[RMDB]
This 177-nucleotide RNA was probed chemically with DMS and 2A3.
Conditions: 150 mM KOAc, 10 mM MgCl2 and 150 mM bicine (pH 8.5), 24 C.
For DMS the reverse transcriptase was MarathonRT.
For DMS, 5,222 sequencing reads were counted.
RNA sequence: GGGAACGACUCGAGUAGAGUCGAAAAAAGCUCAUUUUCGAAUGAGCUUGAAGCGUGAACGCAGGAUAACGCAGAAUCGCGCCGCUGAACCUCCCAAGCGAAAGAUUAAGGUCUUCGGACCUUAAAAGUAAUGACCCUAUUUCGAUAGGGUCAUUACAAAAGAAACAACAACAACAAC
Reactivity to DMS in 0.01 (KOAc 150mM, MgCl2 10mM, bicine 150mM(pH8.5), 24C), signal-to-noise 5, nucleotides 027 to 126: a010a000g010c000u000c000a000u000u000u000u010c160g030a020a000u000g010a010g000c000u000u000g010a100a090g010c020g020u000g010a230a180c120g000c010a070g010g010a120u010a100a110c140g010c030a100g000a090a070u000c040g020c020g010c050c030g000c020u000g000a090a070c140c090u000c000c000c010a090a080g010c090g010a130a070a090g000a150u000u000a010a000g010g000u000c000u000u020c180g030g010a010c000c000u000u000a000a010a050a120
Reactivity to 2A3 in 0.01 (KOAc 150mM, MgCl2 10mM, bicine 150mM(pH8.5), 24C), signal-to-noise 3, nucleotides 027 to 126: a000a000g010c000u020c010a010u010u000u030u090c100g060a020a000u000g000a010g000c000u000u010g000a030a000g000c000g020u030g020a080a040c030g000c050a050g120g140a150u120a230a020c080g020c020a030g100a090a060u060c020g010c020g000c030c000g010c050u040g050a060a050c020c050u050c000c010c020a010a000g070c020g080a180a010a030g070a020u000u080a010a000g010g010u000c000u040u110c260g070g000a010c000c000u000u010a010a010a010a000